Chemical mapping of a 177-nucleotide RNA with 2A3 and DMS. Conditions: 150 mM KOAc, 10 mM MgCl2 and 150 mM bicine (pH 8.5), 24 C. High DMS reactivity at an A or C suggests that its Watson-Crick edge is free. For 2A3 the reverse transcriptase was SuperScript II with manganese. For DMS the reverse transcriptase was MarathonRT. For DMS, 1,960 sequencing reads were counted. For 2A3, 1,557 sequencing reads were counted.
[RMDB]
RNA sequence: GGGAACGACUCGAGUAGAGUCGAAAAUGAUGCCUUGUUGAUUUCUAUGACUAAUCAUAGUUUCAGUGUGCAAAAACACAUUGGCGCUCCAGCAAACUUGCGUGUUGUUGGUCAUGCCAUGCAAGGCCAGAAACGUUAUCUUCGGAUAACGUUUCUGAAAAGAAACAACAACAACAAC
Reactivity to 2A3 in 0.01 (KOAc 150mM, MgCl2 10mM, bicine 150mM(pH8.5), 24C), signal-to-noise 2, nucleotides 027 to 126: u130g050a000u170g020c010c000u010u010g000u010u010g020a010u000u100u050c010u010a020u010g030a070c050u150a270a100u100c010a000u010a000g000u010u010u030c000a010g000u010g010u000g060c050a040a020a040a070a000c000a000c010a000u010u030g040g000c060g060c060u000c020c000a000g000c020a030a020a050c050u190u300g070c120g140u300g020u050u000g020u000u020g010g020u030c010a040u200g000c000c000a010u040g010c010a000a000g010g000c000
Reactivity to DMS in 0.01 (KOAc 150mM, MgCl2 10mM, bicine 150mM(pH8.5), 24C), signal-to-noise 2, nucleotides 027 to 126: u010g010a110u020g010c010c010u000u000g010u020u000g010a040u010u000u010c010u000a010u010g030a110c300u010a100a090u010c000a010u000a000g000u000u000u000c010a030g000u000g000u000g010c050a100a080a120a180a090c020a010c000a020u000u000g010g010c000g020c220u000c010c000a000g000c020a000a040a020c000u000u000g030c260g000u010g010u000u000g000u000u000g000g000u000c120a080u000g000c030c000a040u010g000c010a000a010g020g000c030